[RMDB]
RNA sequence: GGGAACGACUCGAGUAGAGUCGAAAAGGUGAUAACGGCGUGCACCGGCGCGGUUCUCCCGGGGAAUACCGGAGCCGCGCCGCCGACCGCACUGGCGAAUACCAACGGGGCAAUCGCUGCCACGCCGCGUACUACUAUCCUUCGGGAUAGUAGUACGAAAAGAAACAACAACAACAAC
Reactivity to DMS in 0.01 (KOAc 150mM, MgCl2 10mM, bicine 150mM(pH8.5), 24C), signal-to-noise 4, nucleotides 027 to 126: g000g020u010g010a090u000a110a230c010g000g000c020g030u000g000c020a090c200c020g000g000c000g020c000g010g000u000u010c110u000c180c020c030g030g000g000g020a210a110u020a130c000c000g000g010a090g010c010c000g020c020g000c010c000g000c030c030g000a090c060c030g020c060a090c120u010g020g020c050g000a090a080u000a090c030c010a110a130c070g010g000g020g010c060a060a100u020c090g010c120u000g010c050c010a030c020g000c010c000g010
Reactivity to 2A3 in 0.01 (KOAc 150mM, MgCl2 10mM, bicine 150mM(pH8.5), 24C), signal-to-noise 3, nucleotides 027 to 126: g060g030u070g070a140u100a240a040c020g020g000c010g000u020g000c010a010c030c000g010g000c000g010c000g000g030u080u050c100u070c040c030c010g000g000g000g100a300a130u130a250c000c000g000g000a010g000c000c010g020c000g000c000c000g000c000c000g020a000c000c020g030c000a060c080u050g040g000c100g170a080a050u140a180c000c010a160a110c040g040g020g040g040c030a030a080u170c090g030c120u060g030c040c020a010c010g010c000c020g010
About this RNA: The record gives the reactivity of an RNA of 177 nucleotides to DMS and 2A3. Conditions: 150 mM KOAc, 10 mM MgCl2 and 150 mM bicine (pH 8.5), 24 C. For DMS, 3,296 sequencing reads were counted. It was measured as part of the RMDB library OK2TST.